[RMDB]
RNA sequence: GGGAACGACUCGAGUAGAGUCGAAAAGUGUACGCGCUGGCCAUCUCGUUCAACGAGUUCUUUGAGACCGGCCUCUUUGCCGUCUGUAGCUAUUUCGAAAGGGAGUACGUGGACAAGGUGGUGGAGAAUGCUUGGUACCAGCACAAUUUUACUGACACCCAGUAACUGUGUUCGCACAGUUACUGGGAAAAGAAACAACAACAACAAC
Reactivity to 2A3 in 0.01 (KOAc 150mM, MgCl2 10mM, bicine 150mM(pH8.5), 24C), signal-to-noise 2, nucleotides 027 to 156: g040u010g030u070a010c020g020c000g010c040u030g000g000c050c000a090u060c030u000c000g040u080u130c090a160a010c040g030a040g030u050u010c100u040u100u070g070a080g050a030c050c100g060g020c040c000u040c040u050u110u180g050c020c020g010u060c030u090g050u060a040g030c010u040a080u160u150u100c110g140a200a120a020g030g030g020a040g070u040a100c040g030u030g000g000a000c000a020a070g000g000u000g000g030u020g040g020a000g000a080a030u080g020c000u010u050g090g000u040a030c000c030a020g080c060a030c010a060a080u100u130u090u140a120c010u080g020a030c010a020